[RMDB]
RNA sequence: GGGAACGACUCGAGUAGAGUCGAAAAGAUAUGGAAAUGGCCCUCUUUUGACGUACUUGCCCGUCUAUAGUAUCGGAAACGAUACGAAAUAGACGGGCAAGUACGAUAAGAGGGCAUUUCCUAAGUCCUAAAAAACCUUCUUCGGAAGGUUUUUUAGAAAAGAAACAACAACAACAAC
Reactivity to DMS in 0.01 (KOAc 150mM, MgCl2 10mM, bicine 150mM(pH8.5), 24C), signal-to-noise 1, nucleotides 027 to 126: g010a070u000a260u000g010g010a000a000a000u000g000g090c000c010c010u010c000u000u000u000u000g010a240c170g000u000a010c010u000u000g000c000c000c000g000u000c000u000a010u000a300g020u010a010u010c000g000g030a140a120a260c010g020a010u000a000c010g020a040a140a100u000a000g000a010c000g010g010g000c000a000a000g010u000a000c000g000a040u000a010a000g000a010g020g000g010c000a000u000u000u000c010c020u010a030a160g000u000c020

Structure probing data (DMS) for a 177-nucleotide construct. Reactivities are given for positions 27 through 126.